[RMDB]
RNA sequence: GGGAACGACUCGAGUAGAGUCGAAAAGCCAGUCAGAGGGCGCUACCAUGCAAACUAGGGCUGGCUACUCUUGCACAGUAUCACCUUUCUAUAAUAACCAGUGCAAGAAGGGUUAUUAUACCAUUUAAAAAUCGUGAAUGCUUCGGCAUUCACGAAACCGGCUUAAUAUCUUCGGAUAUUAAGCCGGAAAAGAAACAACAACAACAAC
Reactivity to 2A3 in 0.01 (KOAc 150mM, MgCl2 10mM, bicine 150mM(pH8.5), 24C), signal-to-noise 1, nucleotides 027 to 156: g000c010c000a000g000u010c020a000g000a000g130g010g000c010g000c000u110a300c070c120a140u300g010c000a030a000a060c000u010a000g020g000g000c000u000g010g010c000u000a010c000u010c000u000u000g010c010a000c000a000g000u000a060u090c020a240c060c000u080u250u100c020u110a030u000a030a010u000a000a000c000c000a000g000u000g000c000a010a000g000a000a010g000g000g000u000u010a000u000u030a020u020a020c020c010a130u110u260u300a070a140a020a030a050u040c000g000u000g000a000a000u000g000c010u030u040c070g070g000c000a000u000u020c000a000c000g000a000a000a000
Structure probing data (2A3) for a 207-nucleotide construct. As a SHAPE reagent, 2A3 marks flexible, mostly unpaired nucleotides at the ribose 2'-OH. The RNA was probed in 150 mM KOAc, 10 mM MgCl2 and 150 mM bicine (pH 8.5) at 24 C.